[RMDB]
RNA sequence: GGGAACGACUCGAGUAGAGUCGAAAAUUAAUCCCAGUUAAAGCUUUAUAACUAUAAGUAAGCCGUGCCGAAACGUUAAUCGGUCGCUAGUUGCGUAACAACUGUUAGUUUAAUUUUCCAAAAUUUAAAUAGUUAUGUAAUUCGUUACAUAACUAUUAAAAGAAACAACAACAACAAC
Reactivity to DMS in 0.01 (KOAc 150mM, MgCl2 10mM, bicine 150mM(pH8.5), 24C), signal-to-noise 3, nucleotides 027 to 126: u030u040a100a120u010c000c000c010a000g000u000u000a150a020a140g000c000u000u000u010a010u040a020a010c010u000a060u000a000a000g000u010a030a010g100c010c000g010u000g010c000c000g000a010a010a010c010g050u000u060a000a030u000c010g010g000u000c000g000c010u000a020g000u000u000g000c000g000u010a020a020c010a000a010c000u000g010u030u010a090g010u010u010u010a070a070u020u010u010u020c080c050a030a050a090a150u020u020u010a070
Reactivity to 2A3 in 0.01 (KOAc 150mM, MgCl2 10mM, bicine 150mM(pH8.5), 24C), signal-to-noise 4, nucleotides 027 to 126: u090u050a050a060u020c010c000c000a010g010u000u010a030a020a000g010c000u060u030u010a210u190a290a000c010u000a020u010a300a000g030u020a010a000g000c000c000g000u000g000c000c000g010a040a040a100c010g050u070u130a010a000u000c000g000g010u000c000g000c000u000a000g000u010u010g060c000g060u100a000a000c000a000a010c010u010g020u030u020a020g000u000u010u080a130a120u110u130u110u060c030c010a090a080a070a140u030u120u120a050